[RMDB]
Structure probing data (DMS and 2A3) for a 177-nucleotide construct.
RNA sequence: GGGAACGACUCGAGUAGAGUCGAAAAGGGGUAACGCCCUGAAACGUCUUCCCUGAUACUCCGAUUGGCGCUGCAAGACAGCACUUGCAGGGUCAAGAGCUCGGUGAAGUCGGCUGAAUACACUCGCUAGUUCGAUCAAAUUCGUUUGAUCGAACUAAAAAGAAACAACAACAACAAC
Reactivity to DMS in 0.01 (KOAc 150mM, MgCl2 10mM, bicine 150mM(pH8.5), 24C), signal-to-noise 5, nucleotides 027 to 126: g020g010g010g000u010a080a030c300g010c010c010c000u010g000a050a080a150c060g000u000c030u000u010c010c040c030u010g010a070u000a110c050u020c000c120g010a300u020u010g010g000c000g000c000u020g020c000a000a000g020a200c210a150g000c250a120c000u000u010g000c000a030g000g010g030u000c000a040a030g000a070g000c300u010c030g000g010u000g010a080a030g000u010c010g000g010c080u020g010a070a050u020a070c150a110c030u000c050g010c260
Reactivity to 2A3 in 0.01 (KOAc 150mM, MgCl2 10mM, bicine 150mM(pH8.5), 24C), signal-to-noise 7, nucleotides 027 to 126: g000g010g000g010u040a030a030c070g190c010c010c010u010g010a100a080a000c020g020u020c000u000u000c010c000c000u000g010a020u060a160c010u010c030c090g190a190u030u040g030g000c230g010c080u010g000c000a020a030g010a160c100a140g080c130a110c040u000u000g000c010a000g070g020g000u000c000a000a010g010a010g000c020u010c030g020g000u040g020a020a000g030u040c000g020g020c050u050g050a070a030u110a080c060a020c060u040c010g030c080

Description
It was measured as part of the RMDB libraries RFM100 and RFMREP. The RNA was probed in 150 mM KOAc, 10 mM MgCl2 and 150 mM bicine (pH 8.5) at 24 C. For 2A3 the reverse transcriptase was SuperScript II with manganese.